[RMDB]
RNA sequence: GGGAACGACUCGAGUAGAGUCGAAAAUCUAAGAGCGUAACACACACUCAGACUGUACGACAGUCUGACACACAGAUACGCUAGUGUAUCGUGUGUGUGAUAUCGAUGUAGCACGAAAAUGAAAGAAGAUUAUAAUAGCUUUCGAGCUAUUAUAAUCAAAAGAAACAACAACAACAAC
Reactivity to 2A3 in 0.01 (KOAc 150mM, MgCl2 10mM, bicine 150mM(pH8.5), 24C), signal-to-noise 9, nucleotides 027 to 126: u030c030u080a140a010g020a010g100c040g040u060a070a000c010a000c000a000c000a010c040u010c010a000g000a010c000u030g020u170a130c130g170a070c200a000g000u000c000u000g010a000c010a000c000a000c000a050g010a020u020a020c020g040c160u100a130g050u050g010u120a010u020c050g000u010g000u000g000u000g000u010g040a020u020a020u100c050g020a040u090g070u130a020g040c060a020c120g080a050a060a030a060u180g040a090a090a070g100a090a020
Reactivity to DMS in 0.01 (KOAc 150mM, MgCl2 10mM, bicine 150mM(pH8.5), 24C), signal-to-noise 9, nucleotides 027 to 126: u000c040u000a110a100g010a090g010c140g010u010a100a080c020a020c020a020c020a060c070u010c010a020g010a020c000u000g010u000a130c290g020a160c020a010g000u000c000u000g010a020c300a030c090a060c140a050g010a020u000a010c010g010c180u000a080g020u010g000u000a010u000c010g020u000g010u000g010u000g010u000g000a070u010a040u000c040g010a090u000g020u010a060g020c090a080c080g010a040a050a060a070u010g010a070a100a110g010a110a130